[RMDB]
RNA sequence: GGGAACGACUCGAGUAGAGUCGAAAACAUAAUGACUUCGGUCAUUAUGAAAUAAAGGCAGUCGUGUGCGCGCGGCACAGUCACGCGCUGACGCCACGACAAAAAUCGGGACCUUCGGGUCCCGAAAUCCAUUAACGUAGUUCGCUACGUUAAUGGAAAAAGAAACAACAACAACAAC
Reactivity to 2A3 in 0.01 (KOAc 150mM, MgCl2 10mM, bicine 150mM(pH8.5), 24C), signal-to-noise 6, nucleotides 027 to 126: c000a000u010a000a010u010g010a000c020u040u050c240g080g000u000c000a000u000u010a000u000g010a000a030a020u220a030a060a010g190g010c100a040g020u010c010g010u020g060u110g050c010g000c020g000c020g020g030c030a050c060a150g200u200c050a020c140g030c000g020c030u040g050a040c060g000c010c000a000c000g020a010c030a000a110a000a000a000u020c010g000g000g000a000c000c000u050u080c190g090g010g000u000c000c000c000g000a000a000a000
Reactivity to DMS in 0.01 (KOAc 150mM, MgCl2 10mM, bicine 150mM(pH8.5), 24C), signal-to-noise 6, nucleotides 027 to 126: c000a000u000a000a010u000g000a020c000u000u010c190g020g010u010c000a000u000u000a000u000g000a050a090a070u010a070a090a130g020g020c200a110g010u000c000g020u000g010u020g030c010g020c050g010c010g020g000c020a040c080a120g010u010c220a070c140g010c010g010c030u000g000a130c030g000c030c000a010c020g000a010c010a040a040a050a090a070u000c010g000g000g000a010c000c000u000u010c210g010g010g010u000c000c000c000g000a000a020a040